[RMDB]
RNA sequence: GGGAACGACUCGAGUAGAGUCGAAAAGUCCAGGAAGGUGUCCGCCAUUUCCAGGGCCCACGACAUGCUCCCCCCGACGAGCAGGAAGCGGUCCACGCAACGGUCGCCGCCGGUCGCCUCGACGAGGCACGUAAGUGAGCUUCGGCUCACUUACGUGAAAAGAAACAACAACAACAAC
Reactivity to 2A3 in 0.01 (KOAc 150mM, MgCl2 10mM, bicine 150mM(pH8.5), 24C), signal-to-noise 8, nucleotides 027 to 126: g020u020c010c010a010g050g040a090a050g040g020u080g080u130c070c060g020c020c040a110u070u070u050c020c020a030g020g010g000c000c000c010a040c050g060a020c010a050u120g030c020u020c010c000c000c000c000c000g050a080c010g010a050g020c040a040g070g050a080a020g030c020g020g020u050c030c010a060c060g090c030a070a080c060g040g030u060c070g010c010c000g000c010c010g050g030u050c040g010c020c000u010c010g060a090c080g010a080g030g020
Reactivity to DMS in 0.01 (KOAc 150mM, MgCl2 10mM, bicine 150mM(pH8.5), 24C), signal-to-noise 6, nucleotides 027 to 126: g010u040c010c020a080g000g000a050a040g010g000u010g010u030c080c040g010c000c030a100u020u020u000c010c000a110g030g000g010c010c010c030a170c100g000a090c100a080u010g020c050u010c030c020c020c030c040c010g010a060c050g000a070g000c050a070g010g000a110a130g000c090g000g010u010c020c020a090c070g000c090a100a130c130g000g010u010c040g010c020c070g010c010c030g000g000u010c050g010c030c010u000c030g000a070c050g000a070g000g010
Structure probing data (2A3 and DMS) for a 177-nucleotide construct. The RNA was probed in 150 mM KOAc, 10 mM MgCl2 and 150 mM bicine (pH 8.5) at 24 C. Values are in units of 0.01, from 0 to 300, in steps of 10. For 2A3, 12,208 sequencing reads were counted. Values cover nucleotides 27 to 126.